[RMDB]
RNA sequence: GGGAACGACUCGAGUAGAGUCGAAAAAAUUUUGACCUUGCUAUUGAAAUGACUAAGGCUUCUUACGAAAUUUGGGCAGAUAUAAACAGCGAUUCGUUAAAAUAUGUCAGUUAAAAUUAAUAAUUGCUUGUAGUAACAGUUUCGACUGUUACUACAAAAAAGAAACAACAACAACAAC
Reactivity to 2A3 in 0.01 (KOAc 150mM, MgCl2 10mM, bicine 150mM(pH8.5), 24C), signal-to-noise 2, nucleotides 027 to 126: a000a020u060u030u020u070g080a020c000c010u060u080g020c010u060a040u050u100g080a050a060a130u080g020a050c030u050a000a150g020g000c000u040u090c000u030u190a020c020g060a060a050a090u150u080u090g020g000g020c030a000g130a040u100a010u050a160a160a000c030a010g030c010g050a100u040u010c010g020u000u090a000a070a050a120u210a010u080g030u030c010a000g030u010u040a070a050a000a070u080u070a040a130u010a090a010u140u100g050c030
Reactivity to DMS in 0.01 (KOAc 150mM, MgCl2 10mM, bicine 150mM(pH8.5), 24C), signal-to-noise 4, nucleotides 027 to 126: a060a080u020u010u000u020g010a030c020c100u000u000g010c040u000a050u000u030g000a060a070a040u000g010a220c180u010a050a040g010g000c120u000u000c030u000u010a090c070g000a080a040a060u020u000u000g010g000g020c000a010g000a080u010a070u010a080a040a090c140a050g020c040g000a110u010u010c110g000u000u000a020a040a050a050u010a070u010g000u010c040a080g020u000u010a030a040a050a060u020u040a060a050u010a050a100u000u010g000c150